Chemical mapping of a 207-nucleotide RNA with DMS and 2A3. The DMS profile rests on 1,878 reads. It was measured as part of the RMDB library OK3TST.
RNA sequence: GGGAACGACUCGAGUAGAGUCGAAAAGUCAAAAAUCUGAUUGCAGCCAUCAGCAGAGCUUGCCAAAUGAAAGAUUCAGCAAAGACUCUAUGUGGGGACACUUUCGCAGAAUUUUACAGUGAGUUUAUGUUGACACAUAGAAUAACACCAGCAGUAACUUCAUACGCUAAUUCGUUAGCGUAUGAAGAAAAGAAACAACAACAACAAC
Reactivity to DMS in 0.01 (KOAc 150mM, MgCl2 10mM, bicine 150mM(pH8.5), 24C), signal-to-noise 1, nucleotides 027 to 156: g010u000c010a050a090a110a120a080u000c010u000g000a100u000u010g030c020a120g010c030c040a110u000c010a090g020c060a140g010a110g020c010u000u000g060c000c060a040a140a120u000g040a130a110a060g000a130u010u000c020a050g020c060a070a120a170g000a110c040u000c030u000a140u010g000u000g010g040g030g000a030c020a010c040u000u010u000c050g040c020a080g030a100a110u000u000u000u020a080c090a070g030u000g000a030g000u000u000u000a030u030g000u010u010g000a160c000a100c010a010u010a080g000a030a030u000a060a060c020a090c020c020a020g060c000a150g010u000a050a120
Reactivity to 2A3 in 0.01 (KOAc 150mM, MgCl2 10mM, bicine 150mM(pH8.5), 24C), signal-to-noise 3, nucleotides 027 to 156: g040u030c030a010a000a000a060a180u090c060u070g010a050u050u060g020c020a010g020c000c030a030u040c030a070g010c030a040g040a030g030c030u080u090g000c020c010a060a090a130u080g060a090a080a030g050a040u050u050c020a020g010c020a060a010a040g030a090c000u000c010u010a050u090g030u090g000g000g030g030a000c010a010c000u080u080u060c090g000c010a030g100a190a130u130u080u110u230a080c010a020g020u030g020a010g010u120u000u050a090u060g020u010u040g010a000c000a000c000a050u070a030g060a040a040u100a080a020c060a020c030c020a010g020c000a010g050u030a050a040